[RMDB]
RNA sequence: GGGAACGACUCGAGUAGAGUCGAAAACGCGGCGGUGACACUUUGCUGGUUUUCCAUGGUCACCGUCACGCUUUCGGGUGGCGGCGUGGCAGGGGGUCUCUCAGGCAGGCUCGGCGACAGUGGUGGCGGUCUGUCAGCGCCCCCGAGCUCCGAACAAAAGUAGUAUGAUGUUCGCAUCAUACUACUUAAAAGAAACAACAACAACAAC
Reactivity to 2A3 in 0.01 (KOAc 150mM, MgCl2 10mM, bicine 150mM(pH8.5), 24C), signal-to-noise 4, nucleotides 027 to 156: c020g010c020g010g010c020g000g000u000g020a010c030a070c240u190u250u230g070c110u100g100g060u120u130u190u130c030c000a060u100g020g000u000c000a000c010c000g000u000c000a000c010g010c010u050u070u030c060g040g020g010u130g010g050c050g040g030c050g030u040g020g010c010a050g050g000g000g020g030u000c020u010c010u040c100a050g100g000c020a010g030g000c030u050c100g050g030c070g040a090c040a130g120u150g090g040u050g090g080c040g020g070u000c010u010g010u000c020a000g010c000g010c010c000c000c000c000g000a000g000c010u010c000c010g070a070a030c030a050a170
Reactivity to DMS in 0.01 (KOAc 150mM, MgCl2 10mM, bicine 150mM(pH8.5), 24C), signal-to-noise 2, nucleotides 027 to 156: c010g020c030g040g010c010g000g000u000g010a020c010a060c070u010u000u020g020c050u000g000g020u000u000u000u010c020c000a070u020g020g010u000c010a010c000c020g020u010c000a010c000g000c020u000u030u000c030g000g000g020u020g000g010c050g000g020c060g030u000g020g020c000a170g020g020g020g040g010u000c010u010c020u000c060a100g040g000c000a040g020g000c030u010c050g050g000c030g020a090c030a120g030u010g010g030u000g030g030c040g000g010u000c010u000g020u010c030a070g010c120g020c010c000c010c000c010g010a050g030c040u000c030c010g000a120a120c140a080a110
Source information
Conditions: 150 mM KOAc, 10 mM MgCl2 and 150 mM bicine (pH 8.5), 24 C. This 207-nucleotide RNA was probed chemically with 2A3 and DMS. Source: RMDB library OK3TST, as collected in RNAgym. For 2A3, 2,775 sequencing reads were counted.